About this RNA: Structure probing data (DMS and 2A3) for a 177-nucleotide construct. For 2A3 the reverse transcriptase was SuperScript II with manganese. The reactions ran in a buffer of 150 mM KOAc, 10 mM MgCl2 and 150 mM bicine (pH 8.5), at 24 C.
RNA sequence: GGGAACGACUCGAGUAGAGUCGAAAAAUCAGGUCUUAUCAAGUGAUGUUAUGUUUGAAGAUGCCCAAGGUUUGAAAAAGUUCUACAAAGAAGUUAGAGCUUACCUAGGAAUCUCUUCUGCUUGUGAACACAUAUAGUGGUUCGCCACUAUAUGUGUAAAAGAAACAACAACAACAAC
Reactivity to DMS in 0.01 (KOAc 150mM, MgCl2 10mM, bicine 150mM(pH8.5), 24C), signal-to-noise 4, nucleotides 027 to 126: a080u010c060a080g010g010u000c050u000u000a110u020c030a040a060g020u010g010a090u000g020u010u000a080u000g000u010u000u020g010a060a030g010a020u000g010c190c010c020a100a040g010g000u000u010u010g000a060a050a040a050a010g030u000u000c000u000a010c040a070a120a170g010a110a100g000u010u000a010g010a020g010c000u000u000a010c010c010u010a100g000g000a180a050u000c070u000c030u000u000c010u000g010c040u000u000g010u000g000a120
Reactivity to 2A3 in 0.01 (KOAc 150mM, MgCl2 10mM, bicine 150mM(pH8.5), 24C), signal-to-noise 3, nucleotides 027 to 126: a000u080c040a030g020g080u010c010u080u130a080u130c030a070a010g020u010g070a080u090g100u220u110a100u120g100u030u150u050g040a050a020g000a010u020g000c000c000c010a000a010g060g000u040u120u270g130a040a020a000a000a000g000u000u000c000u000a030c020a030a260a040g140a150a030g110u110u040a010g000a000g000c000u000u000a000c000c000u000a030g010g020a030a010u010c010u010c010u040u030c020u040g010c030u030u010g030u030g100a050

For DMS the reverse transcriptase was MarathonRT.